Structure probing data (2A3 and DMS) for a 207-nucleotide construct. Reactivities are rounded to 0.1 and cut off at 0 and 3.
RNA sequence: GGGAACGACUCGAGUAGAGUCGAAAAAAGUCGCUGGAGUUUUUCCGUUCUCAUGAACUGGUGAACGAAGACGGCGACACGCUGGACAUGGAGGAUGUGGUAAACGCCAGCAGCAGCAACCCUGCGCAUCGCCGCAAUGAGAUGAUGGCCUGUGUUACAUACAAAUCCAAUUCGUUGGAUUUGUAUGAAAAGAAACAACAACAACAAC
Reactivity to 2A3 in 0.01 (KOAc 150mM, MgCl2 10mM, bicine 150mM(pH8.5), 24C), signal-to-noise 3, nucleotides 027 to 156: a000a000g070u040c020g000c010u010g100g050a180g120u020u020u020u070u100c050c030g020u020u000c050u030c040a120u280g070a140a050c070u130g030g020u070g030a030a020c010g020a060a020g050a050c050g000g020c000g020a010c020a000c060g020c020u020g000g020a030c020a110u090g050g000a020g020g040a060u030g030u070g040g070u070a060a100a000c050g030c040c020a000g010c030a000g000c010a000g000c000a010a120c000c000c020u020g000c030g010c040a080u100c080g050c070c020g020c060a040a100u170g020a040g020a110u060g000a010u090g010g040c000c020u060g010u020g030u090u100a000
Reactivity to DMS in 0.01 (KOAc 150mM, MgCl2 10mM, bicine 150mM(pH8.5), 24C), signal-to-noise 2, nucleotides 027 to 156: a040a110g040u000c000g000c000u000g040g020a300g000u000u000u000u030u000c030c020g020u000u000c000u010c060a160u010g030a080a200c120u000g040g030u000g010a060a030c030g030a080a100g000a170c070g020g020c030g010a050c030a050c060g020c030u000g000g000a170c060a110u010g000g030a050g000g000a030u000g020u000g020g020u000a070a100a110c050g000c000c020a020g050c040a110g020c040a110g000c050a030a180c050c030c010u000g000c020g000c070a120u000c050g020c040c010g020c090a100a130u000g020a070g000a100u000g000a100u010g020g020c010c010u020g030u000g000u010u000a130